RNA sequence: GGGAACGACUCGAGUAGAGUCGAAAAACAUAUUACGAUAUGAUUCAGAUGGAGUCUUACUGGUUCGUACCAAGGGACAUAAUGGUUUCUUGUUUCCAACCAAAGAACAAGUGGCGAGCCUGAAUAAAAAACUGACUGCCGUUCGCGGCAGUCAGAAGAGAAGUAGUAACUUCGGUUACUACUUCUCAAAAGAAACAACAACAACAAC
Reactivity to 2A3 in 0.01 (KOAc 150mM, MgCl2 10mM, bicine 150mM(pH8.5), 24C), signal-to-noise 4, nucleotides 027 to 156: a000c050a020u210a050u130u200a050c090g040a030u020a040u130g060a060u070u050c030a040g060a130u080g050g070a060g050u000c010u050u110a110c050u050g010g000u010u020c010g010u020a050c020c020a020a010g010g000g010a010c020a030u250a120a180u210g160g000u000u000u010c000u000u010g010u010u040u000c020c030a050a060c000c010a080a110a020g050a080a020c040a070a010g040u030g050g000c020g000a030g050c000c010u020g040a040a020u100a070a120a020a030a020a040c010u000g000a000c000u000g010c020c010g030u010u060c170g000c010g100g000c000a000g000u000c000a000g000a010a000
Reactivity to DMS in 0.01 (KOAc 150mM, MgCl2 10mM, bicine 150mM(pH8.5), 24C), signal-to-noise 1, nucleotides 027 to 156: a120c070a080u000a090u020u000a130c100g000a190u000a070u000g020a080u010u010c050a100g010a190u020g000g030a160g020u000c040u000u000a100c090u000g030g010u000u000c020g020u010a070c160c020a050a110g030g010g000a070c010a120u000a160a160u020g000g000u000u000u000c030u010u000g010u000u010u000c010c020a060a100c090c010a020a150a110g010a140a080c040a050a080g000u000g010g020c010g000a160g000c040c060u000g010a110a160u020a000a030a040a090a080a110c000u000g000a010c030u000g000c000c010g020u000u010c300g030c000g000g060c000a000g010u000c010a000g020a040a110